[RMDB]
Structure probing data (2A3 and DMS) for a 177-nucleotide construct.
The data come from the RNA Mapping Database (RMDB), library OK2TRN.
The reactions ran in a buffer of 150 mM KOAc, 10 mM MgCl2 and 150 mM bicine (pH 8.5), at 24 C.
RNA sequence: GGGAACGACUCGAGUAGAGUCGAAAAGGACACCUCGAGAGGCAAGCGGAGUUCCAUGCCUCAACCCAAGACGAGGCCUGACUCUCCUGUCCCCAGUCUGCAGGGACCCUGCGAUCGGAGUCUGAAAAACUCCUACGUUAUUCGUAACGUAGGAGUUAAAAGAAACAACAACAACAAC
Reactivity to 2A3 in 0.01 (KOAc 150mM, MgCl2 10mM, bicine 150mM(pH8.5), 24C), signal-to-noise 4, nucleotides 027 to 126: g030g010a030c020a070c040c010u030c020g110a110g000a000g110g040c050a050a040g120c070g090g010a050g030u150u050c070c000a010u030g000c000c000u040c020a050a100c010c040c060a050a030g080a030c040g010a000g010g000c000c020u020g000a010c010u020c000u020c030c010u040g040u080c020c010c010c000a030g080u050c060u170g020c030a040g050g040g020a070c030c000c000u020g020c030g010a010u050c040g070g000a030g030u000c020u080g080a080a050a000
Reactivity to DMS in 0.01 (KOAc 150mM, MgCl2 10mM, bicine 150mM(pH8.5), 24C), signal-to-noise 6, nucleotides 027 to 126: g010g000a100c090a120c030c010u010c040g020a110g010a060g020g020c110a060a090g030c180g020g010a140g010u000u010c030c030a100u010g010c010c000u000c020a070a260c050c060c110a110a120g000a120c230g000a020g010g010c030c050u000g000a120c030u000c030u000c040c030u000g010u000c010c000c000c070a120g010u010c040u010g020c070a070g000g000g010a090c140c060c010u000g010c020g000a050u000c090g000g010a050g000u000c010u010g010a060a080a090